[RMDB]
RNA sequence: GGGAACGACUCGAGUAGAGUCGAAAAAAAGAUAUGGACUGGAGACGUCUUGGACCUGUAGGAAGAAGUUAUGUCGGAAACGACAUAAUGUAAACUACAGCUAGACGUUGACAGUCCUAAGUCAAAAGCUUAGGAGGAGGUUCGCCUCCUCCUAAGCAAAAGAAACAACAACAACAAC
Reactivity to DMS in 0.01 (KOAc 150mM, MgCl2 10mM, bicine 150mM(pH8.5), 24C), signal-to-noise 1, nucleotides 027 to 126: a200a050a150g000a000u010a040u060g000g000a010c000u020g010g000a300g000a000c010g030u000c000u000u000g040g000a000c300c000u000g000u000a000g000g000a000a070g040a120a300g000u000u000a000u000g010u000c000g070g000a050a000a020c010g040a040c000a000u000a000a020u000g000u000a000a070a300c000u000a000c000a010g000c000u000a000g000a000c000g040u000u020g000a220c010a000g000u000c000c000u000a000a000g010u010c020a040a030a140a110
This 177-nucleotide RNA was probed chemically with DMS.
For DMS, 661 sequencing reads were counted.
The data come from the RNA Mapping Database (RMDB), library TTRDES.